The record gives the reactivity of an RNA of 177 nucleotides to 2A3 and DMS.
2A3 adducts were read by reverse transcription with SuperScript II with manganese.
Reactivities are rounded to 0.1 and cut off at 0 and 3.
DMS adducts were read by reverse transcription with MarathonRT.
Reactivities are given for positions 27 through 126.
The reactions ran in a buffer of 150 mM KOAc, 10 mM MgCl2 and 150 mM bicine (pH 8.5), at 24 C.
RNA sequence: GGGAACGACUCGAGUAGAGUCGAAAAAGUGCCUUGUUUGGGAAGCAGAUAAACAAACUUCAGAAUUGCUUCAGGACCAUAAGCCCUGUCAGCUUACUUGCAUUGAGAAAUCUAGACUUUGAUUGUCCCCUGGAUAGAUUUUCGAAUCUAUCCAGGGAAAAGAAACAACAACAACAAC
Reactivity to 2A3 in 0.01 (KOAc 150mM, MgCl2 10mM, bicine 150mM(pH8.5), 24C), signal-to-noise 2, nucleotides 027 to 126: a000g070u050g060c010c030u060u040g100u100u070u060g060g020g020a060a000g040c020a020g060a160u140a100a090a010c020a060a080a030c000u110u080c070a080g110a190a180u080u100g000c030u040u020c000a020g020g000a000c000c030a090u030a200a030g020c010c000c000u010g030u050c020a020g040c030u050u040a060c010u090u110g040c030a090u080u110g040a040g080a100a080a050u070c040u090a050g090a170c050u150u070u180g080a100u050u130g120u060c030
Reactivity to DMS in 0.01 (KOAc 150mM, MgCl2 10mM, bicine 150mM(pH8.5), 24C), signal-to-noise 3, nucleotides 027 to 126: a030g020u010g010c010c040u010u000g000u000u010u000g010g000g000a060a060g020c050a060g020a140u010a060a050a160c090a070a060a080c110u010u000c080a060g010a090a110u010u010g010c050u000u000c040a070g010g010a080c080c080a090u010a070a100g000c030c020c020u000g020u000c100a090g000c010u000u000a060c090u010u010g000c040a040u000u000g000a090g010a040a060a060u010c050u000a070g010a060c050u000u010u000g000a110u010u000g010u000c040